[RMDB]
RNA sequence: GGGAACGACUCGAGUAGAGUCGAAAACUGCUGCCAUAGCUACAUCAAGACGGUCUCGAUGAUUCAUAUAAAUAUCUUUCAAUUUGGCAUUUAAAGUAUCUCGUUGCAUAUGAUGAGAUGUAAUUAGCUCCGUUCACUGAUUCGUCAGUGAACGGAGAAAAGAAACAACAACAACAAC
Reactivity to 2A3 in 0.01 (KOAc 150mM, MgCl2 10mM, bicine 150mM(pH8.5), 24C), signal-to-noise 2, nucleotides 027 to 126: c000u050g010c050u000g000c010c000a140u090a100g000c040u080a070c030a080u040c000a040a000g140a090c070g030g000u000c030u020c080g020a050u060g020a030u100u100c050a000u100a010u080a160a120a090u160a040u060c060u030u140u080c100a070a240u100u010u070g020g000c000a020u000u020u220a110a100a050g010u000a040u040c050u010c000g010u050u070g030c110a200u100a070u300g010a010u010g000a020g020a040u020g000u080a070a110u070u080a040g000
Reactivity to DMS in 0.01 (KOAc 150mM, MgCl2 10mM, bicine 150mM(pH8.5), 24C), signal-to-noise 1, nucleotides 027 to 126: c010u000g070c140u000g030c050c060a030u000a080g000c090u020a070c050a050u000c020a120a070g010a080c130g020g010u000c020u000c040g030a090u020g000a080u000u000c030a130u020a160u000a050a080a050u010a090u020c020u000u000u010c100a110a100u000u000u000g000g060c050a110u000u010u000a040a130a180g010u000a060u010c000u000c020g000u000u000g020c100a080u010a090u000g000a020u010g100a070g020a020u000g000u000a010a140u000u000a050g030
Chemical mapping of a 177-nucleotide RNA with 2A3 and DMS.
The reactions ran in a buffer of 150 mM KOAc, 10 mM MgCl2 and 150 mM bicine (pH 8.5), at 24 C.
For 2A3, 916 sequencing reads were counted.
The DMS profile rests on 642 reads.